[RMDB]
RNA sequence: GGGAACGACUCGAGUAGAGUCGAAAAUCCGAAGGCGGAAAAGAUCACUCUGGCCCUGGCCACCAGCAAGGUGGACUACCUGUCGGUAACCACGCCUUACGGCAUUUCGGUUUCGGACUGGAUCGAAUCCUAGUUAGAUGUUCGCAUCUAACUAGGAAAAAGAAACAACAACAACAAC
Reactivity to 2A3 in 0.01 (KOAc 150mM, MgCl2 10mM, bicine 150mM(pH8.5), 24C), signal-to-noise 3, nucleotides 027 to 126: u000c010c010g030a050a020g040g020c030g030g050a010a080a030a070g070a050u080c020a030c100u070c040u060g080g000c030c000c020u020g020g030c000c010a010c000c010a030g200c130a150a140g010g010u010g020g020a030c020u080a050c000c020u050g070u110c040g050g000u020a030a020c030c010a020c040g020c000c000u060u120a090c050g010g000c030a030u070u080u110c100g110g000u000u040u040c040g020g050a060c020u050g030g040a060u050c040g050a030a050
Reactivity to DMS in 0.01 (KOAc 150mM, MgCl2 10mM, bicine 150mM(pH8.5), 24C), signal-to-noise 6, nucleotides 027 to 126: u000c010c010g010a070a050g010g000c020g000g000a050a050a090a110g000a080u000c080a100c110u010c040u000g010g000c030c040c080u010g010g010c010c010a030c010c010a120g010c210a090a080g010g040u000g000g000a080c080u010a080c040c020u000g010u000c050g020g010u000a030a070c040c040a130c190g010c000c010u000u020a100c170g010g020c080a140u000u000u000c090g010g000u010u000u000c020g000g000a040c070u000g000g000a100u000c060g000a090a150